[RMDB]
RNA sequence: GGGAACGACUCGAGUAGAGUCGAAAAGAAUCGCUCUUCGAUCUGAUCGACGGUGAAGUUAGAUGCUGACAUAUUUGCGUUCUCCAACGCUAGGUUUAAUUGAAUUGAGGCUCAGUUUAAGCAAGCCUGGCGUAAAGCCAUUCGUGGCUUUACGCCAAAAAGAAACAACAACAACAAC
Reactivity to 2A3 in 0.01 (KOAc 150mM, MgCl2 10mM, bicine 150mM(pH8.5), 24C), signal-to-noise 2, nucleotides 027 to 126: g000a060a110u040c010g060c060u040c060u180u080c020g090a150u040c030u040g020a030u060c040g000a010c050g010g060u090g060a050a040g040u060u090a060g020a110u180g050c060u090g030a010c020a060u110a050u110u100u080g030c000g000u010u020c070u000c050c050a040a010c020g000c040u020a010g020g040u000u040u040a060a050u010u030g040a000a010u020u010g030a010g170g070c110u030c040a000g000u000u030u030a000a000g020c000a000a000g000c000c020
Reactivity to DMS in 0.01 (KOAc 150mM, MgCl2 10mM, bicine 150mM(pH8.5), 24C), signal-to-noise 3, nucleotides 027 to 126: g000a140a100u010c070g000c210u010c070u020u000c060g010a070u010c060u000g010a150u010c080g030a090c260g020g010u000g000a110a060g000u000u010a070g000a050u000g010c040u020g010a050c060a080u010a080u000u000u000g010c030g000u000u000c010u000c020c110a050a080c040g020c010u000a030g000g010u000u000u000a090a240u010u010g010a020a040u000u000g000a080g010g010c170u000c000a020g010u000u010u000a000a020g010c300a030a000g000c020c010
Record summary
Source: RMDB library OK2TRN, as collected in RNAgym. This 177-nucleotide RNA was probed chemically with 2A3 and DMS. Values cover nucleotides 27 to 126. For DMS the reverse transcriptase was MarathonRT. For 2A3, 1,392 sequencing reads were counted. For DMS, 1,713 sequencing reads were counted.